[RMDB]
RNA sequence: GGGAACGACUCGAGUAGAGUCGAAAACACAUGCCAUCAUAUCGGUUAAGAACUCUUAACUCUGAUGGCUUUCGAGUUAUGUGGUGCAUUGAAGCUCUCCCUUCUAUUCAACGUACCGUUCCGUCAAUACUGUUAUAAACUUCGGUUUAUAACAGUAAAAAGAAACAACAACAACAAC
Reactivity to 2A3 in 0.01 (KOAc 150mM, MgCl2 10mM, bicine 150mM(pH8.5), 24C), signal-to-noise 7, nucleotides 027 to 126: c060a010c000a040u110g000c010c010a010u010c010a010u080a080u270c060g020g000u010u000a020a020g070a300a240c070u040c000u300u010a010a000c000u010c030u090g000a010u000g020g000c000u000u040u010c010g000a000g000u050u070a100u180g130u130g030g000u020g020c020a040u040u110g070a060a030g020c020u020c030u060c080c000c000u060u050c050u070a120u030u050c020a020a020c040g020u010a030c000c020g000u020u000c010c000g030u030c010a020a030
Reactivity to DMS in 0.01 (KOAc 150mM, MgCl2 10mM, bicine 150mM(pH8.5), 24C), signal-to-noise 9, nucleotides 027 to 126: c120a100c160a080u010g010c000c000a010u000c000a050u010a130u010c290g000g000u000u000a010a010g000a250a160c300u010c010u000u000a010a010c000u000c090u000g010a010u000g000g000c000u000u000u000c060g010a060g010u000u000a050u010g010u000g010g010u000g000c020a050u000u000g000a040a040g000c070u000c060u000c010c010c010u000u010c100u000a090u000u000c010a020a030c070g010u000a030c030c010g010u000u000c010c010g000u010c080a070a140